The data come from the RNA Mapping Database (RMDB), library OK2TRN. Chemical mapping of a 177-nucleotide RNA with 2A3 and DMS. The 2A3 profile rests on 6,388 reads. For 2A3 the reverse transcriptase was SuperScript II with manganese.

[RMDB]
RNA sequence: GGGAACGACUCGAGUAGAGUCGAAAAAUUAUAAUGCCGUAAUGCCGAUCGAUGCGCAUCGCGGCUAAUCGCGCGGCAUCGAUUAUACGCGCGUAGCCGUAAUUAUAUAAUGCGCGCGCAUAUGCCGCCCGAAAGAUAGAUUCGUCUAUCUUUCGGGAAAAGAAACAACAACAACAAC
Reactivity to 2A3 in 0.01 (KOAc 150mM, MgCl2 10mM, bicine 150mM(pH8.5), 24C), signal-to-noise 5, nucleotides 027 to 126: a000u230u220a140u080a220a100u130g010c000c000g000u010a020a020u020g000c010c020g080a100u210c120g070a080u220g030c040g000c110a010u040c030g000c000g000g020c000u010a000a010u010c010g000c000g000c000g040g020c010a010u050c010g000a000u070u070a070u130a180c040g000c000g000c000g000u010a030g070c070c020g020u030a040a070u300u080a130u030a040u040a250a080u060g010c010g000c000g010c010g000c000a010u020a000u140g000c000c020g010
Reactivity to DMS in 0.01 (KOAc 150mM, MgCl2 10mM, bicine 150mM(pH8.5), 24C), signal-to-noise 5, nucleotides 027 to 126: a090u010u020a100u000a120a080u010g010c000c010g020u000a080a020u000g010c010c020g010a140u010c250g010a140u010g020c150g010c020a010u000c060g030c020g000g000c010u000a020a020u000c010g010c120g000c010g000g010c010a020u000c050g010a040u010u010a090u020a120c040g010c010g030c010g020u000a020g020c100c110g010u000a060a100u010u010a150u010a090u010a090a100u000g000c010g010c000g010c010g030c300a070u000a020u000g000c020c030g000